[RMDB]
RNA sequence: GGGAACGACUCGAGUAGAGUCGAAAAUUGCCACCAAAAGUUUUGGCAGCUCCUCAACUUCCGGCAUUACGGGCGACAAUACGACAACAUCCUCUGAGCCCGCCCCUUCUGGCUGCCCCCCCGACUCAUAGCCGGACAGAUUCGUCUGUCCGGCUAUAAAAGAAACAACAACAACAAC
Reactivity to 2A3 in 0.01 (KOAc 150mM, MgCl2 10mM, bicine 150mM(pH8.5), 24C), signal-to-noise 1, nucleotides 027 to 126: u010u010g000c010c060a140c050c100a040a220a080a140g030u010u100u220u110g020g000c000a010g020c000u060c020c000u160c010a010a080c080u080u090c040c050g000g020c000a010u000u210a050c050g000g000g030c030g000a060c050a110a040u070a260c050g140a030c030a260a000c010a110u100c000c110u060c120u110g040a020g010c000c000c000g000c010c000c000c020u060u170c030u070g010g000c010u010g000c000c000c000c000c070c090c000g060a070c050u000c050